Chemical mapping of a 177-nucleotide RNA with 2A3 and DMS.
[RMDB]
RNA sequence: GGGAACGACUCGAGUAGAGUCGAAAACCAUGUGUGUCUCAAUUGAAGAACGGGGCUAGAAGAGCAACAGGUUGUGCUUUCCUCACUGUAACACCCAUUGCAGUGGUGACAAUGAGACCUGUGACAGACCGCAUAGCUUCUUCGGAAGCUAUGCGGUAAAAGAAACAACAACAACAAC
Reactivity to 2A3 in 0.01 (KOAc 150mM, MgCl2 10mM, bicine 150mM(pH8.5), 24C), signal-to-noise 2, nucleotides 027 to 126: c030c030a080u110g070u000g030u050g110u070c000u020c060a140a280u110u160g010a130a070g000a010a090c060g000g010g000g000c020u080a040g010a300a030g020a080g030c040a000a020c020a080g030g020u080u000g000u070g120c000u030u120u050c000c000u000c000a000c000u000g000u030a000a020c020a070c100c000c000a060u050u040g000c000a050g000u020g000g040u010g000a040c050a090a120u080g020a000g080a030c000c040u080g000u050g010a040c040a000g050
Reactivity to DMS in 0.01 (KOAc 150mM, MgCl2 10mM, bicine 150mM(pH8.5), 24C), signal-to-noise 2, nucleotides 027 to 126: c000c000a210u020g020u040g000u000g000u000c030u010c060a120a160u030u040g000a010a110g040a100a080c190g010g010g010g000c130u000a040g010a060a160g050a130g020c110a060a030c030a000g020g000u000u000g000u000g010c110u010u040u000c020c010u000c010a010c000u000g000u000a040a000c020a120c030c050c000a290u000u010g000c020a020g000u000g000g020u020g000a060c250a090a040u050g000a170g050a040c000c000u000g030u000g000a130c220a160g000
The RNA was probed in 150 mM KOAc, 10 mM MgCl2 and 150 mM bicine (pH 8.5) at 24 C. The 2A3 profile rests on 641 reads. 2A3 is a SHAPE reagent: it acylates the 2'-hydroxyl of flexible nucleotides of all four kinds.